[RMDB]
RNA sequence: GGGAACGACUCGAGUAGAGUCGAAAAGAUAUGGAUACCAUAUCAACGCAACAGCGUAAAUCGGAAACGAUUUACGACAUGCGUGUAUAGGUAUCCUAAGUCAAACUGCAACUCUUCGGAGUUGCAGGGAAUUCCUAGACUUCGGUCUAGGAAUUCCAAAAGAAACAACAACAACAAC
Reactivity to 2A3 in 0.01 (KOAc 150mM, MgCl2 10mM, bicine 150mM(pH8.5), 24C), signal-to-noise 1, nucleotides 027 to 126: g010a010u080a030u150g020g000a010u020a000c000c000a020u080a030u130c110a050a110c010g000c010a050a170c020a300g110c000g000u000a000a010a000u000c030g000g050a070a060a060c030g000a020u000u000u000a000c030g090a100c020a030u130g010c010g000u020g020u000a030u060a080g020g010u000a000u000c000c000u010a150a000g040u000c090a130a030a140c000u000g000c030a020a010c010u070c000u090u190c300g150g000a000g000u010u000g000c000a000g000
Reactivity to DMS in 0.01 (KOAc 150mM, MgCl2 10mM, bicine 150mM(pH8.5), 24C), signal-to-noise 2, nucleotides 027 to 126: g000a080u030a300u000g000g000a030u000a000c000c000a040u010a010u010c120a220a030c030g010c000a090a130c300a200g020c010g000u010a010a000a030u050c000g000g000a160a100a190c010g010a000u000u000u000a020c000g000a030c100a220u000g010c000g050u000g040u000a000u000a090g020g010u000a000u050c010c000u000a010a050g000u010c050a050a070a300c000u000g000c070a040a000c000u000c000u010u010c180g020g000a000g020u010u000g020c010a010g000

Annotation
This 177-nucleotide RNA was probed chemically with 2A3 and DMS. Source: RMDB library TTRDES, as collected in RNAgym. Conditions: 150 mM KOAc, 10 mM MgCl2 and 150 mM bicine (pH 8.5), 24 C. The 2A3 profile rests on 2,490 reads. For DMS the reverse transcriptase was MarathonRT. For DMS, 1,115 sequencing reads were counted.